[RMDB]
RNA sequence: GGGAACGACUCGAGUAGAGUCGAAAACAAGGUGAACAAUGAAGUUAAAUACACUCCAAUUAGAAAAUUAUCGUAACUAUGAUGAGGUUACGUUGAAAUGUCAUCCUGACGUGAAUAUCCUCAUUGGUCAAAUUCCUUAGUUCGCUAAGGAAUUUGAAAAAGAAACAACAACAACAAC
Reactivity to DMS in 0.01 (KOAc 150mM, MgCl2 10mM, bicine 150mM(pH8.5), 24C), signal-to-noise 4, nucleotides 027 to 126: c070a100a120g000g020u010g010a100a100c110a030a070u010g010a010a040g000u000u030a070a070a120u010a100c160a070c050u040c050c090a020a060u020u020a090g000a060a030a060a080u030u020a040u000c020g010u010a000a020c030u000a060u040g010a160u030g000a130g000g010u010u000a000c030g010u010u010g020a040a050a070u010g010u000c020a070u030c130c060u000g000a060c090g000u010g010a070a080u000a070u000c010c020u000c020a020u010u010g020g010
Reactivity to 2A3 in 0.01 (KOAc 150mM, MgCl2 10mM, bicine 150mM(pH8.5), 24C), signal-to-noise 8, nucleotides 027 to 126: c030a050a030g070g050u120g060a080a030c050a020a080u160g030a110a040g040u080u210a200a160a010u220a070c030a010c020u020c010c010a050a090u080u030a060g100a050a120a050a030u180u080a070u100c020g000u010a010a000c010u030a030u300g100a180u160g120a150g070g030u000u000a000c000g010u000u020g060a080a110a030u090g020u010c020a070u120c000c060u070g020a010c050g030u030g030a070a040u060a060u110c010c020u010c000a020u030u090g040g010